[RMDB]
RNA sequence: GGGAACGACUCGAGUAGAGUCGAAAAUUGAGCGGUCCAUGGGGAAACCUCCCUUCGUCCUUCGGCAUUGGCAUUGUGGUGCGUCGUGGGAGAGCGUGCCGCAUGGGGAAGCCGUGUACGAGGACGUGCCCUUAGACUCGUUCGCGAGUCUAAGGGCAAAAGAAACAACAACAACAAC
Reactivity to 2A3 in 0.01 (KOAc 150mM, MgCl2 10mM, bicine 150mM(pH8.5), 24C), signal-to-noise 1, nucleotides 027 to 126: u110u100g040a010g020c000g000g020u040c060c020a050u050g010g000g020g060a020a170a000c010c070u030c040c020c040u060u030c050g020u000c010c020u140u170c030g030g000c040a050u180u300g000g000c000a070u010u080g000u010g050g000u000g000c000g000u020c060g010u130g030g070g000a040g000a000g090c000g010u030g030c010c000g060c000a000u040g020g020g030g050a150a060g000c020c050g010u050g000u040a270c020g000a030g000g000a000c000g010u020